[RMDB]
RNA sequence: GGGAACGACUCGAGUAGAGUCGAAAACACUGAGUCUUCGGACUCAGUGAAAAGCUCGAAAAGGACCAAAACGAGCAAUUACAUAAAUAAAGGUCCAAAUAAAAAGUCUAGCGUUCGCGCUAGACAAGAAUAUUUCCAAGUUCGCUUGGAAAUAUUCAAAAGAAACAACAACAACAAC
Reactivity to 2A3 in 0.01 (KOAc 150mM, MgCl2 10mM, bicine 150mM(pH8.5), 24C), signal-to-noise 1, nucleotides 027 to 126: c010a000c000u010g010a010g000u000c010u030u050c160g030g000a010c000u010c000a000g000u010g010a000a000a000a000g010c010u000c010g000a040a000a070a140g010g010a000c000c010a100a040a050a070c010g010a020g000c010a030a010u200u100a060c020a030u090a070a010a040u240a040a040a010g000g000u000c020c020a000a040a000u060a000a050a000a020a000g000u000c010u000a010g010c000g000u020u030c250g000c000g000c100u000a000g000a000c000a000a000
Reactivity to DMS in 0.01 (KOAc 150mM, MgCl2 10mM, bicine 150mM(pH8.5), 24C), signal-to-noise 1, nucleotides 027 to 126: c040a010c000u000g010a000g010u000c010u000u040c100g000g020a040c000u010c000a000g030u000g010a030a110a180a130g000c000u000c010g000a000a050a130a110g020g000a010c000c000a060a070a080a030c000g010a000g000c000a080a040u000u000a130c090a080u020a000a000a010u000a030a010a190g000g000u000c000c000a050a100a080u010a050a060a090a160a120g010u010c000u000a010g010c010g000u000u030c260g010c040g010c000u010a000g000a000c000a010a050
The data come from the RNA Mapping Database (RMDB), library M2PK50. Chemical mapping of a 177-nucleotide RNA with 2A3 and DMS. The reactions ran in a buffer of 150 mM KOAc, 10 mM MgCl2 and 150 mM bicine (pH 8.5), at 24 C. Values cover nucleotides 27 to 126.